[RMDB]
Conditions: 150 mM KOAc, 10 mM MgCl2 and 150 mM bicine (pH 8.5), 24 C. The record gives the reactivity of an RNA of 207 nucleotides to 2A3 and DMS. Values cover nucleotides 27 to 156. The DMS profile rests on 11,348 reads.
RNA sequence: GGGAACGACUCGAGUAGAGUCGAAAACCAGAUUUCGAUCUGGCAGGACCGUAGGGAGAACUACAUCGCACUGUACUCGUUGAAACUAUCUUCGAAAGAGGAUAGUGGAGAGUACAAACGAUGCUCCCUAAACGGGGGUAUACGAGUUCGCUCGUAAUCUACGGUUUAAGUUCGCUUAAACCGUAGAAAAAGAAACAACAACAACAAC
Reactivity to 2A3 in 0.01 (KOAc 150mM, MgCl2 10mM, bicine 150mM(pH8.5), 24C), signal-to-noise 6, nucleotides 027 to 156: c000c000a000g010a010u180u200u160c230g090a030u000c010u010g010g000c060a080g100g150a070c020c000g020u030a020g010g070g040a010g000a050a040c090u170a050c300a000u000c010g010c030a050c060u000g000u000a000c000u000c010g170u200u030g010a010a000a000c000u000a010u000c000u020u010c010g060a090a060a040g000a000g000g010a010u000a000g000u000g010g000a020g000a010g010u000a000c000a020a010a000c000g000a000u010g000c000u000c000c000c000u010a010a020a020c020g010g010g000g020g040u170a070u020a220c020g010a010g010u080u100c210g110c070u010c010g010u030a040a080
Reactivity to DMS in 0.01 (KOAc 150mM, MgCl2 10mM, bicine 150mM(pH8.5), 24C), signal-to-noise 4, nucleotides 027 to 156: c000c000a010g000a030u000u000u000c280g020a040u000c000u000g000g030c000a090g030g010a090c010c020g040u000a060g030g010g020a300g010a110a200c040u000a260c000a010u000c000g020c010a140c160u000g020u000a020c000u000c000g000u000u000g020a270a230a040c000u010a010u000c000u000u010c000g020a140a140a300g010a030g020g020a010u000a000g000u000g020g000a150g010a020g010u000a000c020a010a040a030c000g000a040u000g000c000u000c000c000c000u000a000a040a080c050g000g010g010g010g010u020a130u000a030c000g000a090g020u000u000c220g000c040u000c000g020u000a060a200